An RNA of 207 nucleotides, treated with DMS and 2A3 and read out base by base. The 2A3 profile rests on 990 reads. The DMS profile rests on 4,508 reads. Reactivities are given for positions 27 through 156. For DMS the reverse transcriptase was MarathonRT. 2A3 adducts were read by reverse transcription with SuperScript II with manganese.

RNA sequence: GGGAACGACUCGAGUAGAGUCGAAAAAACCCGUUGAUUGAAAUUGAACCGUCCUGUUAUCGAAAGAUAGGCAGAAGAUACGAAAUGUGUGACAGCAUGGGAAGUAAAGGCAGACCGUGGUUCCAUUAAAAUCGUCGAAUCUUCGGAUUCGACGAAACCAUAUAUUAAGGUUCGCCUUAAUAUAUGGAAAAGAAACAACAACAACAAC
Reactivity to DMS in 0.01 (KOAc 150mM, MgCl2 10mM, bicine 150mM(pH8.5), 24C), signal-to-noise 2, nucleotides 027 to 156: a090a080c000c000c010g050u020u000g010a180u010u020g000a070a130a080u010u010g010a060a080c040c030g030u000c030c010u010g030u000u000a050u000c030g020a170a130a140g000a070u010a060g060g040c040a040g010a040a060g000a120u000a080c090g000a040a100a060u000g010u010g020u010g020a130c110a120g000c020a050u000g020g000g000a120a110g000u000a050a070a100g000g010c010a040g000a100c030c020g030u000g000g020u010u000c010c000a130u000u000a020a070a060a210u010c000g020u000c000g000a010a010u010c000u000u020c300g040g000a020u000u000c010g030a000c000g010a010a020a080
Reactivity to 2A3 in 0.01 (KOAc 150mM, MgCl2 10mM, bicine 150mM(pH8.5), 24C), signal-to-noise 2, nucleotides 027 to 156: a000a040c030c000c000g010u000u080g040a300u030u020g050a070a100a070u080u070g030a070a060c030c010g060u080c020c000u010g020u040u080a040u020c000g060a100a090a070g050a040u030a050g070g010c020a000g040a100a040g000a020u100a100c030g050a040a030a080u090g040u010g020u030g070a030c020a040g030c010a050u040g000g000g030a030a070g030u180a120a110a060g020g000c020a020g020a030c030c020g020u060g000g000u040u000c000c000a000u030u190a050a080a050a080u010c000g000u000c000g000a000a000u000c000u040u000c120g030g010a000u000u000c000g000a000c000g000a000a000a000